Structure probing data (2A3 and DMS) for a 177-nucleotide construct. Conditions: 150 mM KOAc, 10 mM MgCl2 and 150 mM bicine (pH 8.5), 24 C. It was measured as part of the RMDB library OK2TRN.

RNA sequence: GGGAACGACUCGAGUAGAGUCGAAAAUCACGAUGUAGUGCGAUCCGAUCGGAUCUGAGAUAUGUCGCUAGUAUAGUACACGCAGCGUACUACCAUGGUACGUACGAUACAUGUCUAUCUAGACGUGGAUCAGAGUAUGUUUCGACAUACUCUGAUCAAAAGAAACAACAACAACAAC
Reactivity to 2A3 in 0.01 (KOAc 150mM, MgCl2 10mM, bicine 150mM(pH8.5), 24C), signal-to-noise 9, nucleotides 027 to 126: u080c020a010c040g030a030u080g030u110a060g050u050g140c040g010a010u000c010c010g140a300u220c220g010g010a010u000c050u090g070a050g020a090u060a020u070g050u020c020g000c060u010a010g040u130a030u010a030g100u120a000c030a000c050g070c050a050g020c010g000u000a010c000u030a060c030c080a140u270g070g000u030a030c060g010u010a020c020g020a010u020a090c040a030u040g010u000c010u010a050u000c020u030a010g050a090c070g100u120g130
Reactivity to DMS in 0.01 (KOAc 150mM, MgCl2 10mM, bicine 150mM(pH8.5), 24C), signal-to-noise 9, nucleotides 027 to 126: u000c070a290c040g010a050u000g020u000a040g010u010g030c230g010a020u000c000c010g010a130u010c220g010g010a020u000c010u000g010a110g000a110u000a020u000g010u000c020g010c020u010a020g010u010a010u000a010g010u010a020c010a020c060g010c110a030g000c000g000u000a010c000u000a020c040c100a140u010g020g010u000a010c250g010u000a020c020g000a060u000a040c030a040u000g010u000c010u000a020u000c030u000a010g010a150c160g020u010g010